[RMDB]
RNA sequence: GGGAACGACUCGAGUAGAGUCGAAAAUGGGCUACCGGUAAGCGAAAAAUGAUACAGGACGAAAAAAACAUAAUUCGAGAUUUUUCAGGAUGGAUUUUUUUAGGUAUCUAUCAAAACUAUUCUGAUGCAACGUAGAGCACGUUCGCGUGCUCUACAACUAAGCAUAUAACUUCGGUUAUAUGCUUAGAAAAGAAACAACAACAACAAC
Reactivity to DMS in 0.01 (KOAc 150mM, MgCl2 10mM, bicine 150mM(pH8.5), 24C), signal-to-noise 2, nucleotides 027 to 156: u000g020g000g000c030u000a090c030c030g010g010u000a060a120g000c030g000a030a080a090a110a090u010g000a170u000a110c020a050g010g030a070c030g030a010a000a030a090a060a070a100c040a070u010a070a180u010u010c010g000a150g020a200u000u000u000u010u000c020a020g010g000a010u010g010g010a010u000u000u000u000u000u000u000a030g030g000u000a030u010c020u000a020u000c030a010a020a030a040c030u000a020u000u000c000u000g020a050u000g000c070a080a090c080g000u000a010g020a020g030c000a020c000g000u000u010c270g010c020g060u000g030c020u000c000u010a010c020a020a150
Reactivity to 2A3 in 0.01 (KOAc 150mM, MgCl2 10mM, bicine 150mM(pH8.5), 24C), signal-to-noise 3, nucleotides 027 to 156: u070g000g020g000c020u050a030c000c010g000g040u060a020a020g040c020g080a060a010a020a030a040u100g040a050u050a080c050a040g060g030a020c020g070a040a040a000a020a010a010a020c080a070u160a080a100u100u080c030g010a020g030a180u060u150u040u070u130c000a000g010g000a010u000g030g000a040u020u010u010u000u020u040u040a030g040g010u160a070u180c010u000a010u010c030a010a020a000a010c010u010a020u040u010c000u020g010a010u050g030c040a040a050c080g000u000a000g000a000g000c000a000c010g010u040u070c130g010c000g070u000g000c000u000c000u000a000c000a000a000

The data come from the RNA Mapping Database (RMDB), library M2RFOK. An RNA of 207 nucleotides, treated with DMS and 2A3 and read out base by base. DMS (dimethyl sulfate) methylates the pairing face of unpaired adenines and cytosines.